Chemical mapping of a 177-nucleotide RNA with DMS. The data come from the RNA Mapping Database (RMDB), library TTRINS. Conditions: 150 mM KOAc, 10 mM MgCl2 and 150 mM bicine (pH 8.5), 24 C.
RNA sequence: GGGAACGACUCGAGUAGAGUCGAAAAGAUAUGGAGUUGGAGGGCAGCAUCGAUCAGCUUCCAUCACAGCUAUUCGGAAACGAAUAGUCACAGUGGAAGCUGGGAGCUGUCUUCCAACUCCUAAGUCGCAUUAUGUUAUGUUCGCAUAACAUAAUGCAAAAGAAACAACAACAACAAC
Reactivity to DMS in 0.01 (KOAc 150mM, MgCl2 10mM, bicine 150mM(pH8.5), 24C), signal-to-noise 6, nucleotides 027 to 126: g010a070u010a300u020g010g000a010g010u000u010g000g010a040g010g000g020c010a000g000c010a300u000c180g010a110u020c000a010g010c000u000u000c000c000a020u000c070a190c300a300g000c000u000a010u010u000c000g020g000a150a110a230c000g010a020a000u000a000g000u000c040a120c300a260g000u000g000g010a020a020g010c000u000g000g010g000a030g010c000u000g010u000c000u000u000c000c000a010a010c010u000c000c010u000a010a060g010u000c100

The DMS profile rests on 6,810 reads.